[RMDB]
RNA sequence: GGGAACGACUCGAGUAGAGUCGAAAAGUUGUGAAAUUUCACGACAUGACUUGCUGAAAAUUGUGUCGGGUUUUUCAGCGGAAAUUCAUAACGAUAUUAACCGUUCGGUCUCGAUCGUGCCGAUCGAAAUCAUCCUCACUUUCGAGUGAGGAUGAUUAAAAGAAACAACAACAACAAC
Reactivity to DMS in 0.01 (KOAc 150mM, MgCl2 10mM, bicine 150mM(pH8.5), 24C), signal-to-noise 4, nucleotides 027 to 126: g010u000u010g010u000g010a020a070a070u000u000u000c020a130c040g010a050c050a080u000g000a040c120u000u000g010c130u010g000a080a030a020a040u000u000g010u000g030u010c050g010g020g010u010u000u010u010u010c050a050g010c050g040g010a010a030a020u000u000c010a000u010a030a020c050g000a180u000a120u010u000a110a150c080c020g010u010u000c030g000g000u000c080u000c070g000a050u000c080g010u000g010c070c060g000a010u000c030g000a030
Reactivity to 2A3 in 0.01 (KOAc 150mM, MgCl2 10mM, bicine 150mM(pH8.5), 24C), signal-to-noise 3, nucleotides 027 to 126: g000u000u000g010u010g050a070a090a240u080u080u020c040a030c050g080a030c010a040u090g050a080c070u070u150g000c030u050g010a000a050a060a080u130u120g100u040g060u190c030g080g090g020u010u130u010u000u060c010a010g000c000g030g000a030a000a000u050u050c020a020u020a060a010c030g030a030u020a110u240u130a060a050c030c000g000u030u000c040g030g040u040c040u020c120g100a140u030c030g030u100g050c010c050g010a020u040c020g040a030